[RMDB]
RNA sequence: GGGAACGACUCGAGUAGAGUCGAAAAUGCAUGUGGACGCGAUGAUCGUCGGUGUCACGCUCAUGGAGUUCCACCUGAUGUACGCAGCGCUGGUGGGCGGCCAUGCCCCUCUCGAGCUACCGCCGGCCUCGACGCAACACUUCGGUGUUGCGUCGAGAAAAGAAACAACAACAACAAC
Reactivity to DMS in 0.01 (KOAc 150mM, MgCl2 10mM, bicine 150mM(pH8.5), 24C), signal-to-noise 4, nucleotides 027 to 126: u010g000c030a060u000g030u000g010g010a050c040g000c020g030a040u010g000a020u010c050g020u010c040g010g030u010g010u020c070a070c050g010c060u010c020a040u000g000g010a300g020u020u000c000c000a020c010c090u010g000a070u010g030u000a050c170g000c110a120g020c110g010c020u000g000g030u000g000g010g020c040g010g010c060c050a060u010g000c030c020c000c040u000c070u000c100g010a060g000c050u000a140c080c020g000c030c030g000g010c070
Reactivity to 2A3 in 0.01 (KOAc 150mM, MgCl2 10mM, bicine 150mM(pH8.5), 24C), signal-to-noise 3, nucleotides 027 to 126: u150g000c040a020u090g040u050g050g020a010c030g050c030g160a120u040g020a030u050c030g050u030c030g090g090u120g040u090c050a020c040g010c020u040c030a040u060g050g000a060g000u220u120c000c000a010c020c010u110g070a260u070g110u090a050c150g000c140a050g030c060g020c050u000g020g030u040g000g020g020c010g080g000c030c000a030u080g010c040c000c000c000u020c020u030c020g040a050g010c020u070a040c000c020g000c000c020g000g020c000
Source: RMDB library OK2TST, as collected in RNAgym. This 177-nucleotide RNA was probed chemically with DMS and 2A3. DMS adducts were read by reverse transcription with MarathonRT. Conditions: 150 mM KOAc, 10 mM MgCl2 and 150 mM bicine (pH 8.5), 24 C. For 2A3 the reverse transcriptase was SuperScript II with manganese.